[RMDB]
RNA sequence: GGGAACGACUCGAGUAGAGUCGAAAAGAUAUGGAACUACCACUCCAUAGCUAGCUUAUCACGGAGGUUCGGAAACGAACCUCCGUGUAAGAGCUUGGACCUAUGGAAAUACGUAGUUCCUAAGUCACUUAGUUUAUAGGUUCGCCUAUAAACUAAGAAAAGAAACAACAACAACAAC
Reactivity to DMS in 0.01 (KOAc 150mM, MgCl2 10mM, bicine 150mM(pH8.5), 24C), signal-to-noise 5, nucleotides 027 to 126: g000a040u000a300u000g010g000a030a020c000u000a000c010c140a230c220u000c000c000a010u000a010g010c030u000a020g020c000u010u000a300u000c010a010c000g030g020a030g020g010u000u000c000g020g010a120a120a270c000g020a010a020c020c000u000c000c000g030u000g000u000a030a300g000a010g000c000u000u010g020g000a120c300c000u000a000u000g000g000a030a060a110u010a160c300g000u000a000g010u000u000c000c000u010a010a100g000u010c050a240
Reactivity to 2A3 in 0.01 (KOAc 150mM, MgCl2 10mM, bicine 150mM(pH8.5), 24C), signal-to-noise 2, nucleotides 027 to 126: g000a000u090a080u200g020g000a030a000c000u020a010c020c030a050c090u020c010c010a020u010a020g000c010u000a000g000c010u010u050a030u230c000a000c020g050g010a010g060g100u010u000c030g100g100a170a180a120c020g000a000a000c020c000u030c000c000g010u000g000u010a020a030g000a000g010c010u050u120g080g080a060c020c010u030a020u010g010g040a120a210a030u230a040c100g000u000a000g000u000u010c000c000u020a060a020g060u000c000a010